Structure probing data (2A3 and DMS) for a 177-nucleotide construct. The 2A3 profile rests on 3,595 reads. The reactions ran in a buffer of 150 mM KOAc, 10 mM MgCl2 and 150 mM bicine (pH 8.5), at 24 C. For DMS the reverse transcriptase was MarathonRT.
[RMDB]
RNA sequence: GGGAACGACUCGAGUAGAGUCGAAAAGAUAUGGACUCAGCUUUUGACGCUUGUCUAUCGGAAACGAUAGGUAAGCGAUAAGCUGGUCCUAAGUCAAAAUCAAGUCUUUCUUCGGAAAGACUUGAAAUCUAGAGAAUUUGUUCGCAAAUUCUCUAGAAAAAGAAACAACAACAACAAC
Reactivity to 2A3 in 0.01 (KOAc 150mM, MgCl2 10mM, bicine 150mM(pH8.5), 24C), signal-to-noise 2, nucleotides 027 to 126: g020a010u040a040u110g000g010a010c050u070c300a000g000c040u100u110u100u300g250a140c140g010c000u010u020g000u010c000u000a000u000c000g000g000a020a070a020c000g000a000u010a010g020g000u020a010a000g000c000g000a010u000a010a000g010c010u000g010g000u000c000c000u000a030a030g040u000c020a020a020a020a300u060c010a020a000g000u000c000u000u020u000c020u020u060c130g020g000a000a000a000g000a000c000u000u010g000a000a000a010
Reactivity to DMS in 0.01 (KOAc 150mM, MgCl2 10mM, bicine 150mM(pH8.5), 24C), signal-to-noise 3, nucleotides 027 to 126: g000a060u000a300u020g000g000a000c010u010c010a020g010c000u010u000u000u000g000a170c090g000c000u010u000g010u000c000u010a000u000c000g020g000a100a050a120c000g010a010u000a010g000g000u010a000a010g020c000g000a050u000a000a010g010c000u000g020g010u000c000c000u000a020a050g000u000c000a090a100a140a170u000c000a000a000g000u000c010u010u000u000c000u000u000c200g000g000a000a010a000g000a000c000u000u000g000a010a040a060